[RMDB]
RNA sequence: GGGAACGACUCGAGUAGAGUCGAAAAACAGUGUGAUGGACUAUUCGGCCUUUCAGGACUCGUGAGUGAGAACACGGUCUCGUUCGUGGAGAAUACUCUGAGUACACUCGUCUCCCUUACUACGGGAGCUUAACGCCUGAUUCGUCAGGCGUUAAGCAAAAGAAACAACAACAACAAC
Reactivity to DMS in 0.01 (KOAc 150mM, MgCl2 10mM, bicine 150mM(pH8.5), 24C), signal-to-noise 2, nucleotides 027 to 126: a090c080a010g010u000g020u000g000a120u010g000g000a050c080u000a040u010u010c000g000g000c010c000u000u030u000c000a040g000g000a040c020u030c020g030u010g010a080g020u000g010a170g020a120a180c030a010c050g000g010u000c030u000c020g030u000u000c110g000u000g000g000a130g000a060a040u020a020c160u000c010u010g010a080g010u000a030c040a050c030u000c210g000u000c060u010c010c000c000u000u010a120c120u010a130c220g010g010g010a060
Reactivity to 2A3 in 0.01 (KOAc 150mM, MgCl2 10mM, bicine 150mM(pH8.5), 24C), signal-to-noise 1, nucleotides 027 to 126: a000c040a010g000u010g010u020g040a090u120g030g000a010c010u050a050u010u020c010g260g170c000c020u020u130u030c040a020g000g000a010c030u050c270g020u030g020a080g020u140g110a160g050a050a010c040a000c000g040g000u000c030u000c020g090u070u030c030g060u170g000g040a050g020a020a030u030a020c000u000c010u060g040a030g120u060a030c030a010c040u030c010g090u030c040u010c020c000c010u010u130a110c090u060a020c090g000g000g050a030

Conditions: 150 mM KOAc, 10 mM MgCl2 and 150 mM bicine (pH 8.5), 24 C. Chemical mapping of a 177-nucleotide RNA with DMS and 2A3. Reactivities are given for positions 27 through 126. For DMS, 1,771 sequencing reads were counted.